[RMDB]
RNA sequence: GGGAACGACUCGAGUAGAGUCGAAAAAUACAGCGUAAUCGAGCGCAGGAAAACGGCACUCCGAAAAUCCGGUACGAUUAUGAUCCCACUGCGUCGACGCUAGAUGCAGAACCGGAUUGCCGAGGAAUAUGAAACCUUAUUUCGAUAAGGUUUCAUAAAAAGAAACAACAACAACAAC
Reactivity to DMS in 0.01 (KOAc 150mM, MgCl2 10mM, bicine 150mM(pH8.5), 24C), signal-to-noise 7, nucleotides 027 to 126: a110u010a110c180a100g010c030g010u000a050a060u000c070g010a200g030c140g020c070a100g010g000a040a060a090a130c050g010g010c030a080c260u000c070c060g010a060a060a040a030u000c010c020g000g010u010a110c090g000a040u000u010a050u000g010a080u000c000c020c020a240c020u000g000c000g040u000c010g010a140c220g020c190u010a060g000a010u000g010c010a010g000a110a040c040c020g000g000a020u000u000g010c040c030g010a090g010g010a100a120
Reactivity to 2A3 in 0.01 (KOAc 150mM, MgCl2 10mM, bicine 150mM(pH8.5), 24C), signal-to-noise 5, nucleotides 027 to 126: a000u110a020c060a020g020c010g030u040a070a070u120c080g040a040g110c040g000c060a050g080g070a030a110a030a030c000g000g000c010a010c080u070c050c040g040a100a040a010a030u000c010c010g010g030u030a040c070g020a030u100u070a050u230g050a050u030c010c020c010a040c000u000g000c010g000u010c000g040a080c110g060c280u070a040g000a020u020g000c000a000g020a040a010c010c000g000g000a010u020u040g000c000c010g010a070g050g090a090a070